[RMDB]
RNA sequence: GGGAACGACUCGAGUAGAGUCGAAAAGAAAGAGAGUUAGACACGGUUGAUCUCACCCUUCGGGGGGGCUAUAGAGAUCACUGGAAGCACUACCGGACAACCGGAACAUUGCAGCAAUGCGGCCCAAAAAAUCCAAACAUCUUCGGAUGUUUGGAAACCAUAACCUAUACUUCGGUAUAGGUUAUGGAAAAGAAACAACAACAACAAC
Reactivity to 2A3 in 0.01 (KOAc 150mM, MgCl2 10mM, bicine 150mM(pH8.5), 24C), signal-to-noise 2, nucleotides 027 to 156: g040a010a100a010g080a010g020a000g030u080u130a030g050a040c020a010c140g020g020u080u150g010a010u000c010u000c000a050c010c030c030u100u190c230g050g000g000g000g000g000g000c050u110a090u080a210g020a000g000a000u010c000a000c010u010g010g030a000a000g030c030a030c040u070a070c000c010g000g060a080c060a160a200c050c010g000g020a020a020c030a030u040u150g010c000a020g030c010a040a030u080g000c030g010g010c000c000c000a000a120a010a030a010a020u000c000c000a010a000a000c000a000u010c000u050u030c100g110g000a000u000g000u000u000u000g000g000a020a010a000
Reactivity to DMS in 0.01 (KOAc 150mM, MgCl2 10mM, bicine 150mM(pH8.5), 24C), signal-to-noise 1, nucleotides 027 to 156: g010a050a090a060g030a250g000a040g020u000u000a080g030a120c030a180c000g010g000u000u000g010a030u000c010u000c000a120c040c020c010u020u010c100g040g020g020g000g000g000g020c030u010a150u000a080g000a090g020a070u000c000a030c000u000g020g010a150a160g030c070a040c000u020a180c010c000g010g000a090c250a030a150c030c010g040g010a110a060c100a100u000u000g000c030a160g050c040a040a070u000g000c000g010g000c030c030c000a000a000a050a120a080a110u000c000c000a000a020a010c000a000u000c000u000u000c300g010g050a000u010g060u000u000u000g000g000a000a000a050